An RNA of 207 nucleotides, treated with 2A3 and read out base by base. The RNA was probed in 150 mM KOAc, 10 mM MgCl2 and 150 mM bicine (pH 8.5) at 24 C. For 2A3, 863 sequencing reads were counted. Reactivities are rounded to 0.1 and cut off at 0 and 3.
[RMDB]
RNA sequence: GGGAACGACUCGAGUAGAGUCGAAAACAAUCAACAAUAUGGUUUGUGUAGUUAUGCUGAAAAUCGUUGAGGUUGUAUGGAAUAGGUUAGCCGUAAGACCUUAAGUUGAAAAACUUUAAAAUUAAUCAAAAUCAUGUACACUUCGGUGUACAUGAAACGAGAUAGUAGUCUUCGGACUACUAUCUCGAAAAGAAACAACAACAACAAC
Reactivity to 2A3 in 0.01 (KOAc 150mM, MgCl2 10mM, bicine 150mM(pH8.5), 24C), signal-to-noise 2, nucleotides 027 to 156: c040a000a030u130c060a030a040c020a140a020u100a040u190g030g040u050u020u020g040u040g000u060a080g040u020u060a070u130g010c000u080g070a000a040a040a090u100c070g000u030u010g010a030g040g000u000u010g030u030a130u060g090g020a110a120u010a130g000g020u020u040a040g010c010c010g050u030a090a000g020a010c020c000u000u040a040a000g000u000u000g000a010a030a040a010a010c030u150u240u210a100a070a080a110u240u180a150a090u060c000a010a030a050a190u020c000a000u000g000u010a000c000a010c000u100u110c140g050g000u000g010u000a010c020a000u000g000a010a000a000
2A3 adducts were read by reverse transcription with SuperScript II with manganese.